[RMDB]
RNA sequence: GGGAACGACUCGAGUAGAGUCGAAAAGAUAUGGAACCAUGGCCUUCUUGGACCCAGCCGGUCGGAAACGACCGCUGGCUAGAAGGUGGUUCCUAAGUCAAAACUUUUGAUGUUCGCAUCAAAAGAAGCAAUAGGCGUAGUUCGCUACGCCUAUUGCAAAAGAAACAACAACAACAAC
Reactivity to DMS in 0.01 (KOAc 150mM, MgCl2 10mM, bicine 150mM(pH8.5), 24C), signal-to-noise 1, nucleotides 027 to 126: g010a030u000a300u000g000g010a000a020c000c000a120u020g160g000c130c000u010u010c000u000u000g050g000a120c300c000c000a000g030c150c040g110g050u000c020g020g000a060a100a140c000g030a030c020c000g020c010u000g000g020c020u000a020g020a020a000g010g020u000g000g000u000u020c020c000u020a000a050g000u020c000a160a090a070a260c020u000u000u000u000g030a000u000g010u000u000c300g000c010a010u000c000a000a000a030a060g000a120a100
Reactivity to 2A3 in 0.01 (KOAc 150mM, MgCl2 10mM, bicine 150mM(pH8.5), 24C), signal-to-noise 1, nucleotides 027 to 126: g000a000u060a000u080g000g010a000a020c000c000a060u100g300g080c020c030u010u000c030u120u300g090g000a170c000c030c030a000g080c140c250g050g010u060c000g010g020a060a010a010c000g000a010c000c010g010c020u000g000g000c000u010a000g010a000a000g090g000u040g010g000u060u030c000c010u000a050a000g000u020c010a010a030a240a300c030u010u020u010u000g020a000u000g040u060u160c300g090c160a010u000c010a010a030a020a000g080a080a020